RNA sequence: GGGAACGACUCGAGUAGAGUCGAAAAUGAUCUCUCAAUCACUUAAAGCAUUCGCUAAGGAGUUUAAUACCCCUAUUAUUGCUGCAGCUCAACUUUCUAGAAGGAUUGAAGAAAGGAAAGAUUCCAGUCCAUGUAACAUUUUCGAAUGUUACAUGGAAAAAGAAACAACAACAACAAC
Reactivity to DMS in 0.01 (KOAc 150mM, MgCl2 10mM, bicine 150mM(pH8.5), 24C), signal-to-noise 8, nucleotides 027 to 126: u010g010a110u000c030u000c060u010c020a060a050u010c030a120c080u000u000a070a100a080g010c030a080u000u000c210g020c070u010a110a060g010g010a030g010u000u000u010a070a110u010a130c050c010c000c040u000a110u000u000a060u000u000g020c030u000g010c140a060g000c050u000c090a050a110c050u000u000u000c070u010a090g010a070a090g010g000a040u000u000g010a060a050g000a030a060a090g000g000a060a060a100g000a210u000u000c020c030a140g000
Reactivity to 2A3 in 0.01 (KOAc 150mM, MgCl2 10mM, bicine 150mM(pH8.5), 24C), signal-to-noise 6, nucleotides 027 to 126: u070g030a050u010c020u000c000u000c040a010a040u040c020a050c160u050u110a130a050a010g000c010a090u130u130c060g000c040u030a030a040g030g020a040g030u050u090u110a160a110u180a120c030c020c000c010u030a050u230u030a100u100u180g020c020u020g000c010a020g000c000u010c040a010a080c040u070u140u020c030u050a040g060a140a030g080g040a040u020u080g060a070a060g040a040a060a010g100g040a040a050a060g060a040u070u020c010c010a010g070